[RMDB]
RNA sequence: GGGAACGACUCGAGUAGAGUCGAAAACAAUCAACAAUAUGGUUUGUGUAGUUAUGCUGAAAAUCGUUGAGGUUGUAUGGAAUAGCUUAACCGUAAGACCUUAAGUUGAAAAACUUUAAAAUUAAUCAAAAUCAUGUACACUUCGGUGUACAUGAAAGUAACUUGGAUACUUCGGUAUCCAAGUUACAAAAGAAACAACAACAACAAC
Reactivity to 2A3 in 0.01 (KOAc 150mM, MgCl2 10mM, bicine 150mM(pH8.5), 24C), signal-to-noise 4, nucleotides 027 to 156: c020a010a100u080c020a000a040c020a050a080u070a060u160g030g030u050u060u010g060u040g020u080a090g010u020u040a040u090g000c030u070g070a090a050a080a110u090c080g030u030u070g030a050g060g010u040u040g050u070a100u120g040g040a120a090u040a060g000c010u010u030a020a010c010c000g080u040a060a020g010a010c000c000u010u030a070a010g000u020u020g020a060a060a010a020a020c060u110u240u290a040a100a100a180u190u200a150a080u090c030a060a020a070a190u030c000a000u000g000u000a010c000a000c000u000u070c160g070g000u000g000u000a000c010a000u000g000a000a000a000
Reactivity to DMS in 0.01 (KOAc 150mM, MgCl2 10mM, bicine 150mM(pH8.5), 24C), signal-to-noise 1, nucleotides 027 to 156: c040a200a130u010c010a050a030c060a050a190u010a110u000g010g010u010u000u000g010u010g020u000a080g030u000u000a060u010g070c020u050g000a120a050a050a040u000c020g020u030u000g000a180g000g000u000u000g000u030a220u000g060g000a110a080u000a170g010c120u000u000a030a060c020c040g000u000a090a060g000a050c010c020u000u020a080a170g000u010u000g000a070a120a050a040a050c060u000u000u000a060a040a060a130u000u000a080a240u000c060a070a060a170a170u000c000a000u000g020u000a010c000a020c000u000u000c190g020g000u010g010u000a000c000a010u000g000a010a020a050